RNA sequence: GGGAACGACUCGAGUAGAGUCGAAAACGCAGCGCAUGUGCCCCGCGUCCUGGUCCUGGCUCUGCGAGUAGUUGGUGAUGCGGCUGGCGUUGGCCGUGAGCCACUUUUCAAUCGUCAGGCCGGGCUGGUGUGUCAGCCGUCGGUAUUCGUCAAACUCCUCUCGCGUACUAUUCGUAGUACGCGAGAGAAAAGAAACAACAACAACAAC
Reactivity to 2A3 in 0.01 (KOAc 150mM, MgCl2 10mM, bicine 150mM(pH8.5), 24C), signal-to-noise 1, nucleotides 027 to 156: c010g010c000a030g000c000g040c080a050u040g030u170g090c050c000c040c090g050c040g030u040c000c010u060g100g120u240c000c000u010g000g000c030u110c100u160g000c030g030a050g040u040a020g010u020u250g000g010u010g000a130u300g010c000g000g020c000u020g050g180c080g000u110u130g000g010c020c040g060u060g000a010g030c050c010a000c000u120u040u020u100c060a070a050u040c030g060u070c040a010g000g000c000c000g000g000g000c000u000g000g030u110g000u030g010u060c030a000g070c030c000g050u080c030g060g050u090a240u120u120c040g000u120c030a020a100a080c010u150c060